[RMDB]
RNA sequence: GGGAACGACUCGAGUAGAGUCGAAAAAUGACUCUUGGAUGGGAAAGCAUGCACCACGGGCAUGCGAAAGGAUGGGCAUCGAGGAUGAGCAUGCGAAAGGAUGGCGUCCUCUCGGAUGGGAAAGCAUGCUCGUAUAUUAUGACGUACGGAAACCAUCGAUCGAGUAUCAAUUCGUUGAUACUCGAUCAAAAGAAACAACAACAACAAC
Reactivity to 2A3 in 0.01 (KOAc 150mM, MgCl2 10mM, bicine 150mM(pH8.5), 24C), signal-to-noise 4, nucleotides 027 to 156: a000u110g020a050c020u020c030u110u100g080g010a060u010g030g030g010a070a050a010g010c000a000u030g000c020a100c120c020a050c090g050g020g000c010a000u010g000c020g000a000a000a010g040g020a040u050g000g000g030c020a050u050c060g030a020g080g000a050u060g010a020g040c010a000u020g000c020g080a100a020a020g120g000a030u020g020g020c030g050u000c010c000u040c030u080c080g070g000a060u060g020g000g060a040a070a010g000c010a000u020g000c000u000c010g010u010a060u000a010u060u060a090u150g050a030c070g010u080a030c050g030g030a050a030a050c040c010a030u060c030
Reactivity to DMS in 0.01 (KOAc 150mM, MgCl2 10mM, bicine 150mM(pH8.5), 24C), signal-to-noise 1, nucleotides 027 to 156: a100u000g000a070c020u000c040u000u000g000g050a100u010g000g000g010a160a090a170g000c020a060u010g020c030a080c000c110a120c080g000g000g050c010a000u040g010c010g020a050a070a100g030g000a080u000g000g000g000c030a080u000c070g030a080g000g020a120u000g010a060g050c020a070u000g000c000g000a070a080a070g010g030a070u000g020g000c030g030u010c000c010u000c040u080c090g010g000a090u050g000g020g000a130a070a210g000c010a020u000g020c040u000c000g070u000a030u010a060u000u010a110u010g010a160c050g010u000a180c050g010g020a090a050a080c030c000a050u000c040